[RMDB]
An RNA of 177 nucleotides, treated with 2A3 and DMS and read out base by base. Conditions: 150 mM KOAc, 10 mM MgCl2 and 150 mM bicine (pH 8.5), 24 C.

RNA sequence: GGGAACGACUCGAGUAGAGUCGAAAAGCCAUGUCUGGACUCAAACAUGGCGGCAGGGGAAUGCUGCCCGUCAACACAGAAUACUUGACAAUGUGAUGCACAAACACCAGGGCACAUUUUCCCUUCAAAGUACCCCAGAAUUCGUUCUGGGGUACUUAAAAGAAACAACAACAACAAC
Reactivity to 2A3 in 0.01 (KOAc 150mM, MgCl2 10mM, bicine 150mM(pH8.5), 24C), signal-to-noise 6, nucleotides 027 to 126: g000c000c000a010u020g010u000c030u070g100g200a300c120u090c280a030a040a010c010a010u010g000g000c010g000g000c060a010g000g030g000g010a030a010u020g020c090u010g000c130c010c000g050u060c040a080a060c010a010c020a090g180a200a110u170a220c060u120u180g040a030c080a080a140u060g020u020g050a110u130g070c140a040c060a170a200a020c060a070c040c110a080g000g000g030c000a000c000a000u020u020u060u220c000c000c000u000u060c020a010
Reactivity to DMS in 0.01 (KOAc 150mM, MgCl2 10mM, bicine 150mM(pH8.5), 24C), signal-to-noise 3, nucleotides 027 to 126: g040c000c000a030u000g000u010c070u000g020g040a260c280u140c010a050a060a000c000a000u000g000g000c000g000g010c280a050g000g030g000g000a010a000u000g000c300u000g000c000c000c000g020u010c020a010a020c130a070c120a110g000a110a140u020a090c130u020u050g010a060c130a070a150u010g040u000g020a090u010g000c220a110c100a080a110a110c050a030c140c250a110g010g020g000c000a020c000a000u000u000u000u000c000c000c000u000u000c060a010